[RMDB]
RNA sequence: GGGAACGACUCGAGUAGAGUCGAAAAGCUACCAGGGGACCGACAUCGUCCGUGGUUGCGAUCCGUUGGUGAAGCCCGUUGGCAGACAGGCCUGUGAUCUGCAGCCCUGCCCCACGGAGCCCCCAGGCUUGCCGGAUGUAUUCGUACAUCCGGCAAGAAAAGAAACAACAACAACAAC
Reactivity to 2A3 in 0.01 (KOAc 150mM, MgCl2 10mM, bicine 150mM(pH8.5), 24C), signal-to-noise 1, nucleotides 027 to 126: g010c000u050a100c000c000a000g150g060g040g000a000c080c000g060a060c050a220u130c050g120u010c050c050g100u090g070g000u000u060g000c010g020a070u050c030c080g160u050u100g030g050u100g030a060a040g060c040c010c060g080u010u120g020g010c040a040g050a240c050a070g020g000c040c030u010g000u060g020a300u070c060u250g000c000a000g000c000c010c020u000g000c050c030c000c000a010c040g020g010a060g000c000c000c000c000c000a030g000g060
Reactivity to DMS in 0.01 (KOAc 150mM, MgCl2 10mM, bicine 150mM(pH8.5), 24C), signal-to-noise 2, nucleotides 027 to 126: g000c050u000a050c000c010a180g020g010g020g000a030c040c070g010a080c160a050u000c070g010u010c060c110g000u020g010g010u000u000g020c000g000a030u000c020c080g030u000u000g000g000u000g000a120a110g020c000c000c120g030u000u000g020g020c110a090g000a100c030a030g000g000c210c040u000g010u010g010a140u020c230u020g000c000a050g010c190c010c020u000g020c030c050c000c020a020c050g000g000a110g000c010c060c020c010c040a150g000g000